An RNA of 177 nucleotides, treated with 2A3 and DMS and read out base by base. Conditions: 150 mM KOAc, 10 mM MgCl2 and 150 mM bicine (pH 8.5), 24 C. Values are in units of 0.01, from 0 to 300, in steps of 10.

[RMDB]
RNA sequence: GGGAACGACUCGAGUAGAGUCGAAAAGUAGUGUCUCUAGACUUAAACUGGAGGAAAGGGACCCCUAUCCUGUUAAUUCCGAGGAGGCUCAAGACCCAGAGAAGAUUCGUCUCCUAUCGUCCAGGACAGUCCGUGAAGGAUUCGUCCUUCACGGACUAAAAGAAACAACAACAACAAC
Reactivity to 2A3 in 0.01 (KOAc 150mM, MgCl2 10mM, bicine 150mM(pH8.5), 24C), signal-to-noise 4, nucleotides 027 to 126: g150u160a010g020u010g120u090c030u000c040u040a050g050a120c050u060u150a190a180a060c040u030g120g000a020g020g050a040a030a040g020g000g020a040c000c050c000c000u040a050u030c000c000u040g060u070u080a110a100u220u030c040c010g050a010g060g000a030g010g000c000u010c080a060a040g020a080c020c000c040a030g000a000g030a120a080g010a040u100u080c050g030u010c040u000c040c010u030a070u090c030g020u000c030c010a030g020g050a060c010
Reactivity to DMS in 0.01 (KOAc 150mM, MgCl2 10mM, bicine 150mM(pH8.5), 24C), signal-to-noise 2, nucleotides 027 to 126: g040u010a060g010u040g000u000c020u010c070u000a060g000a160c080u000u030a100a090a210c030u010g010g010a000g000g020a060a200a040g020g000g000a060c060c050c020c040u000a090u000c000c000u000g000u050u000a050a200u040u030c030c070g000a150g040g000a050g000g000c020u000c060a140a110g020a120c070c000c020a030g000a020g000a070a080g000a060u000u000c080g000u000c020u010c020c000u000a050u040c070g000u000c080c050a040g020g030a030c140